[RMDB]
RNA sequence: GGGAACGACUCGAGUAGAGUCGAAAAUAGCCUUAGUGCUGCCUGGUGCAAAAACUAGAUGUAAAGGUAUUACUGGAAAGGAAAGUGAGCAGAGGGCUUUCUCUACCCAAUAAGUAAGCAGACAUCAGAAACGGAUAGCAAAAGUGAGAAACAAAAAAUAGCUAAUAAUAUUCGUAUUAUUAGCUAUAAAAGAAACAACAACAACAAC
Reactivity to DMS in 0.01 (KOAc 150mM, MgCl2 10mM, bicine 150mM(pH8.5), 24C), signal-to-noise 3, nucleotides 027 to 156: u000a070g000c010c020u000u000a090g030u000g020c000u010g010c050c040u000g000g050u000g020c030a050a040a090a080a110c020u000a050g010a080u000g000u000a070a080a090g030g040u000a090u000u000a060c010u010g000g000a050a070a110g020g000a190a030a100g010u000g040a070g010c060a060g020a110g020g010g000c060u010u000u020c050u000c020u000a070c060c000c010a060a080u000a030a070g010u000a020a040g030c030a090g000a080c120a080u010c090a130g000a040a060a050c070g000g010a030u000a040g010c030a050a030a030a050g000u000g000a070g000a120a060a090c030a010a060a070a110a070
Reactivity to 2A3 in 0.01 (KOAc 150mM, MgCl2 10mM, bicine 150mM(pH8.5), 24C), signal-to-noise 3, nucleotides 027 to 156: u090a020g010c020c010u090u140a120g010u120g080c020u010g010c010c000u000g000g020u030g020c020a020a030a020a050a070c010u010a030g020a040u070g020u190a080a060a080g100g010u090a050u070u040a050c020u030g030g010a130a170a050g010g020a070a010a030g050u070g050a010g010c050a010g020a030g000g010g010c000u010u090u000c000u000c010u030a040c000c000c010a020a020u100a070a000g030u010a000a000g000c010a000g050a090c050a080u090c030a040g090a020a010a000c010g030g000a020u020a020g010c010a020a030a020a000g010u030g020a010g040a030a100a000c070a030a040a050a260a000
An RNA of 207 nucleotides, treated with DMS and 2A3 and read out base by base. DMS adducts were read by reverse transcription with MarathonRT. Reactivities are given for positions 27 through 156.